This 177-nucleotide RNA was probed chemically with 2A3 and DMS. For DMS the reverse transcriptase was MarathonRT. Source: RMDB library VIROID, as collected in RNAgym. Reactivities are given for positions 27 through 126. The RNA was probed in 150 mM KOAc, 10 mM MgCl2 and 150 mM bicine (pH 8.5) at 24 C. For 2A3, 902 sequencing reads were counted.
RNA sequence: GGGAACGACUCGAGUAGAGUCGAAAAUUAGCCCAGACUUUUGAGAGAAUUAGUCACCUCUCAGCCCCUCCACCUUGGGGUGCCCUAUCCGAGCACUGCUGUUUCGGUAGAAAGGCUAAGCACGUCGGAACUAACAUGGGUUCGCCCAUGUUAGUUCAAAAGAAACAACAACAACAAC
Reactivity to 2A3 in 0.01 (KOAc 150mM, MgCl2 10mM, bicine 150mM(pH8.5), 24C), signal-to-noise 1, nucleotides 027 to 126: u110u080a010g060c000c030c000a010g140a120c020u140u060u040u030g000a010g010a010g000a030a020u150u100a100g070u020c040a010c010c000u060c000u000c000a000g000c000c020c000c000u040c040c040a120c060c000u060u070g010g040g000g000u010g030c060c000c000u010a010u000c010c000g010a000g020c030a030c140u210g050c090u040g140u090u300u040c020g000g000u000a000g000a030a020a010g000g000c030u030a070a000g030c090a070c140g240u220c150g110
Reactivity to DMS in 0.01 (KOAc 150mM, MgCl2 10mM, bicine 150mM(pH8.5), 24C), signal-to-noise 2, nucleotides 027 to 126: u010u030a100g000c000c000c000a180g030a150c090u000u000u000u000g000a030g020a010g000a080a040u000u010a120g010u010c220a090c180c000u000c010u000c010a050g000c040c010c000c010u000c160c140a130c140c100u010u000g000g010g000g010u000g000c000c000c010u000a060u000c020c000g000a050g000c030a030c260u010g040c160u000g000u000u010u010c010g010g050u000a040g000a030a110a100g000g010c010u010a030a080g000c130a030c150g000u000c140g030